[RMDB]
RNA sequence: GGGAACGACUCGAGUAGAGUCGAAAAGGGUGUGCUCAGAGCAGGGGGCCUGAAGAAUGGCUCCUCUGUUUACAACACACCCAACAGGAAGCUGGGGUCAUCGUGAUGAGGGGCACAAACUUGUGGCCUAGAGAAAGGAGUUCGCUCCUUUCUCUAGAAAAGAAACAACAACAACAAC
Reactivity to DMS in 0.01 (KOAc 150mM, MgCl2 10mM, bicine 150mM(pH8.5), 24C), signal-to-noise 9, nucleotides 027 to 126: g010g010g020u000g010u000g010c040u020c190a300g000a020g010c000a010g010g000g000g000g000c000c000u010g000a140a100g010a190a140u030g000g000c000u030c000c000u010c000u000g010u000u010u010a080c280a120a150c020a000c000a010c010c000c000a040a030c110a090g010g010a070a080g010c040u010g000g000g000g000u010c070a060u010c060g000u010g000a090u010g010a080g010g000g000g000c040a030c050a040a100a100c140u010u010g010u010g000g000c080
Reactivity to 2A3 in 0.01 (KOAc 150mM, MgCl2 10mM, bicine 150mM(pH8.5), 24C), signal-to-noise 8, nucleotides 027 to 126: g010g000g000u010g000u000g000c030u080c140a050g020a000g050c000a000g010g010g000g020g020c000c010u060g040a130a070g110a200a110u240g000g000c040u130c050c010u010c000u000g000u000u010u020a040c030a020a010c000a000c000a000c000c000c000a000a010c010a000g020g020a040a020g010c030u040g010g020g020g000u040c020a070u050c090g060u060g060a120u060g010a040g000g000g010g000c030a000c020a050a120a050c060u090u080g040u060g060g030c000
This 177-nucleotide RNA was probed chemically with DMS and 2A3. Reactivities are given for positions 27 through 126. For DMS the reverse transcriptase was MarathonRT.